[RMDB]
RNA sequence: GGGAACGACUCGAGUAGAGUCGAAAAAUCGGAUCCGCGUCUGCGUACCGCUAGUCUAUGCGCUCAUGAGGUACGCUAGUGAUCUCGCUAGUCAGGAUCAUGAUCCAUGGAUCUGGUACGAUCGAGCGUAACUGAGCCUAUUCGUAGGCUCAGUUACAAAAGAAACAACAACAACAAC
Reactivity to DMS in 0.01 (KOAc 150mM, MgCl2 10mM, bicine 150mM(pH8.5), 24C), signal-to-noise 4, nucleotides 027 to 126: a050u010c040g010g010a050u000c040c010g010c130g000u000c130u020g010c000g010u000a010c030c010g010c110u010a070g000u000c020u010a060u010g020c170g020c040u000c110a070u000g010a040g000g030u000a050c110g020c010u000a060g020u000g000a090u010c140u010c040g010c030u010a050g000u010c030a160g010g010a030u000c010a040u000g000a150u000c070c030a060u000g010g010a000u000c180u000g010g010u000a030c150g010a120u000c090g000a140g020c170
Reactivity to 2A3 in 0.01 (KOAc 150mM, MgCl2 10mM, bicine 150mM(pH8.5), 24C), signal-to-noise 4, nucleotides 027 to 126: a000u060c020g020g020a030u020c020c010g020c070g160u060c100u110g030c000g000u000a000c000c010g000c120u050a030g000u000c040u090a140u200g090c160g010c080u040c020a070u090g010a020g010g070u020a030c000g000c000u000a010g010u010g030a120u030c130u080c090g000c030u040a060g070u200c060a050g040g080a020u000c000a000u040g020a020u020c060c040a060u100g020g020a010u000c040u070g010g020u020a040c050g040a090u110c060g040a040g040c050

Source: RMDB library OK2TRN, as collected in RNAgym. Structure probing data (DMS and 2A3) for a 177-nucleotide construct. The RNA was probed in 150 mM KOAc, 10 mM MgCl2 and 150 mM bicine (pH 8.5) at 24 C. For DMS, 4,146 sequencing reads were counted. Reactivities are rounded to 0.1 and cut off at 0 and 3.